[RMDB]
RNA sequence: GGGAACGACUCGAGUAGAGUCGAAAAGAUAUGGAGAAUUCGCGAUAAGCUCUGACUCGGAAACGAGUUUGAGCUUUUGACGCGAACUCCUAAGUCAAACCACUCAAGCCUUCGGGCUUGAGUGGAACCCCCUAAAUAUCUUCGGAUAUUUAGGGGGAAAAGAAACAACAACAACAAC
Reactivity to DMS in 0.01 (KOAc 150mM, MgCl2 10mM, bicine 150mM(pH8.5), 24C), signal-to-noise 2, nucleotides 027 to 126: g020a060u000a290u010g000g000a010g000a120a250u000u010c010g020c000g020a150u000a030a000g010c000u000c000u010g010a000c000u000c000g020g000a050a090a180c000g010a000g020u000u000u000g000a020g010c000u000u000u000u000g000a120c070g000c000g010a010a070c000u000c010c000u010a030a110g000u000c010a150a180a210c000c000a030c000u000c010a000a000g010c000c000u000u010c170g020g000g010c000u000u000g010a000g000u000g000g000a020a020
Reactivity to 2A3 in 0.01 (KOAc 150mM, MgCl2 10mM, bicine 150mM(pH8.5), 24C), signal-to-noise 1, nucleotides 027 to 126: g000a010u020a040u150g020g000a010g020a140a300u070u010c000g000c000g060a060u030a260a010g000c000u040c010u020g030a000c000u000c000g000g000a030a050a050c000g000a010g000u000u000u010g000a010g000c010u000u010u010u010g020a010c000g020c000g020a000a010c020u000c000c000u000a070a000g020u000c040a100a010a130c010c010a000c010u010c010a010a000g000c000c040u110u190c300g080g000g000c000u010u000g000a000g010u020g030g000a010a010